[RMDB]
RNA sequence: GGGAACGACUCGAGUAGAGUCGAAAAGAUAUGGACGAAAAGUCAGCAACAGCGUGCGAUCGGAAACGAUCGCCACGACAUGCUGUCGCUCGUCCUAAGUCAAAACUUAGGCGUUCGCGCCUAAGAAGAAAGGAGACUUGUUCGCAAGUCUCCUUUCAAAAGAAACAACAACAACAAC
Reactivity to DMS in 0.01 (KOAc 150mM, MgCl2 10mM, bicine 150mM(pH8.5), 24C), signal-to-noise 2, nucleotides 027 to 126: g030a010u000a300u000g010g010a000c000g000a000a110a080a190g000u000c030a000g000c000a040a080c260a150g020c020g020u000g040c020g000a000u000c000g030g000a090a020a110c000g010a000u000c000g020c240c050a000c000g010a030c100a300u000g010c000u000g000u000c000g000c240u000c000g000u000c000c000u000a020a120g000u000c000a130a070a090a130c000u000u000a000g000g000c010g050u000u000c210g040c050g020c020c000u000a000a000g010a060a120
Reactivity to 2A3 in 0.01 (KOAc 150mM, MgCl2 10mM, bicine 150mM(pH8.5), 24C), signal-to-noise 1, nucleotides 027 to 126: g000a010u050a020u080g000g010a000c000g030a040a030a010a280g080u130c020a010g000c020a010a250c060a180g070c000g040u000g000c020g000a010u020c000g000g040a010a120a000c000g000a000u000c000g050c030c010a000c020g080a040c040a140u300g000c000u000g000u030c010g010c120u040c020g000u000c000c000u010a040a020g070u000c010a040a000a130a200c000u010u010a020g000g010c000g070u040u140c300g030c020g010c120c000u000a000a020g000a010a040